[RMDB]
RNA sequence: GGGAACGACUCGAGUAGAGUCGAAAAACGUUUUUUGAGUGCUUUAGACAUCGCAUCUGAGAUUGGCGUCGUUGCCGGGCAUUCCGCCAAACACCACCAAUGGUUAAUUUUUGGCUCACCAUCGACGGGUAAUUGUCCGAUUCGUCGGACAAUUACCAAAAGAAACAACAACAACAAC
Reactivity to 2A3 in 0.01 (KOAc 150mM, MgCl2 10mM, bicine 150mM(pH8.5), 24C), signal-to-noise 1, nucleotides 027 to 126: a000c090g000u090u070u030u080u040u120g050a000g020u010g070c020u090u060u150a070g020a080c060a110u040c070g050c080a090u000c080u090g080a100g040a290u140u140g030g020c020g000u010c060g070u020u040g070c050c060g030g000g020c000a000u130u050c060c000g070c000c000a020a030a010c020a080c030c000a030c070c100a060a080u100g040g030u050u100a110a030u150u050u050u070u070g020g000c000u010c020a110c050c000a020u030c020g020a030c060g060
Reactivity to DMS in 0.01 (KOAc 150mM, MgCl2 10mM, bicine 150mM(pH8.5), 24C), signal-to-noise 1, nucleotides 027 to 126: a080c120g010u000u000u000u000u000u000g020a070g030u000g010c030u020u000u000a130g020a060c070a090u030c120g020c030a040u010c080u000g000a170g020a050u010u010g010g030c040g000u000c090g030u000u010g030c070c060g030g000g030c030a110u000u000c130c090g000c050c020a010a090a090c170a040c010c020a090c090c100a140a110u010g020g000u000u020a060a030u000u010u000u020u000g020g000c010u010c080a110c110c040a020u000c070g000a150c160g010
About this RNA: The record gives the reactivity of an RNA of 177 nucleotides to 2A3 and DMS. High 2A3 reactivity points to a flexible backbone, as in loops and unpaired stretches. DMS (dimethyl sulfate) methylates the pairing face of unpaired adenines and cytosines. The reactions ran in a buffer of 150 mM KOAc, 10 mM MgCl2 and 150 mM bicine (pH 8.5), at 24 C. For DMS the reverse transcriptase was MarathonRT. The DMS profile rests on 786 reads.